[RMDB]
This 177-nucleotide RNA was probed chemically with DMS and 2A3. DMS adducts were read by reverse transcription with MarathonRT. The RNA was probed in 150 mM KOAc, 10 mM MgCl2 and 150 mM bicine (pH 8.5) at 24 C.
RNA sequence: GGGAACGACUCGAGUAGAGUCGAAAACUUAACACUAUCGACUCCAUAAUGACCCAUCAGUCAAACGGUAUAUCUCAAACGACUACGGUUUACUCCAAAUUCAUUGGCUAGUUGAGGCCAAGAAACACAGAGUUUAACUGUUCGCAGUUAAACUCUGAAAAGAAACAACAACAACAAC
Reactivity to DMS in 0.01 (KOAc 150mM, MgCl2 10mM, bicine 150mM(pH8.5), 24C), signal-to-noise 3, nucleotides 027 to 126: c130u000u000a080a080c130a120c130u000a020u000c000g010a080c030u000c040c060a080u030a110a100u010g010a070c020c010c050a040u000c050a080g000u000c050a040a060a060c040g000g000u000a060u020a110u000c040u000c040a060a030a090c140g010a020c070u000a060c050g010g010u010u010u000a070c050u010c040c100a020a130a140u030u020c040a100u010u000g000g020c020u000a080g000u010u010g000a140g000g000c000c020a010a020g010a040a040a090c190a190
Reactivity to 2A3 in 0.01 (KOAc 150mM, MgCl2 10mM, bicine 150mM(pH8.5), 24C), signal-to-noise 7, nucleotides 027 to 126: c020u090u090a070a010c030a030c100u080a050u090c030g030a020c010u030c030c010a070u070a200a160u210g030a070c000c010c010a070u070c020a010g070u050c020a030a020a040c030g020g020u060a060u020a050u100c050u010c030a110a080a030c070g030a010c020u040a020c050g040g030u020u030u050a040c020u010c010c010a030a040a160u110u090c070a120u040u050g000g000c000u020a090g070u050u080g090a070g060g000c000c000a000a000g030a010a040a000c100a000